[RMDB]
RNA sequence: GGGAACGACUCGAGUAGAGUCGAAAACGCAGAGGGUUCUGAUAACAAAGAACCUAGAUAACCGCAUCGGUAUUAUAGGAUGUAGUCGGUGAGCCGGAAUGCCUGCAUCGUAAGCCUAUAAGUAAAUUUAAGUGUAAUCACUUCGGUGAUUACACAACAUGCAUAAAGACUUCGGUCUUUAUGCAUGAAAAGAAACAACAACAACAAC
Reactivity to DMS in 0.01 (KOAc 150mM, MgCl2 10mM, bicine 150mM(pH8.5), 24C), signal-to-noise 3, nucleotides 027 to 156: c120g070c050a100g010a220g000g020g010u000u000c010u010g010a160u000a120a210c300a130a210a070g010a020a040c010c000u000a070g010a120u000a080a220c010c020g030c050a120u000c030g020g000u000a060u000u000a080u000a050g010g000a070u000g040u020a100g030u010c020g010g010u000g010a050g030c040c020g000g020a120a220u000g000c050c040u000g030c020a030u010c020g000u000a110a130g000c010c020u000a040u000a040a040g010u000a050a050a170u000u000u000a080a120g020u000g000u000a020a020u000c000a000c010u010u010c220g060g020u010g000a030u000u000a000c000a020c000a050a100
Reactivity to 2A3 in 0.01 (KOAc 150mM, MgCl2 10mM, bicine 150mM(pH8.5), 24C), signal-to-noise 5, nucleotides 027 to 156: c080g020c040a040g070a090g080g030g000u020u000c020u010g090a110u090a250a060c020a040a080a010g010a000a000c000c000u010a000g030a040u100a030a050c050c020g050c090a100u130c100g050g000u080a070u140u060a040u070a050g060g000a040u040g040u090a040g080u080c020g010g010u040g040a030g050c020c020g050g080a100a020u110g020c010c010u050g060c010a030u020c040g020u040a060a020g000c010c010u060a060u030a130a040g070u080a020a100a240u140u170u130a170a050g000u000g000u010a000a000u000c000a000c010u020u040c180g040g000u010g000a000u000u000a000c000a000c000a000a000

Source: RMDB library M2RFPK, as collected in RNAgym.
An RNA of 207 nucleotides, treated with DMS and 2A3 and read out base by base.
For 2A3, 3,955 sequencing reads were counted.